[RMDB]
RNA sequence: GGGAACGACUCGAGUAGAGUCGAAAAUUAAUACUGCUACAUUUUUAAGACCCUUAGUUAUUUAGCUUUACCGCCCAGGAUGGGGUGCAGCGUUCCUGCAAUAUCCAGGGCACCCAGGUGCAGCCUUCAUGCCUCAUGCCGUUCGCGGCAUGAGGAACCAAGUAUGCUACUUCGGUAGCAUACUUGGAAAAGAAACAACAACAACAAC
Reactivity to 2A3 in 0.01 (KOAc 150mM, MgCl2 10mM, bicine 150mM(pH8.5), 24C), signal-to-noise 1, nucleotides 027 to 156: u070u070a040a030u060a150c020u040g020c020u060a060c070a160u100u180u130u020u130a130a020g020a110c020c000c000u040u020a020g040u040u040a210u230u170u000a020g010c010u000u100u080a030c010c020g010c000c000c000a000g030g000a080u030g020g010g060g100u010g010c020a000g000c010g050u070u200c000c010u000g000c010a030a040u000a020u130c000c000a010g020g000g000c010a020c010c020c030a010g000g030u070g020c050a060g050c040c040u100u130c040a060u110g020c000c000u000c000a000u010g000c000c000g000u060u100c300g000c000g000g000c000a010u000g000a000g000g000a000a000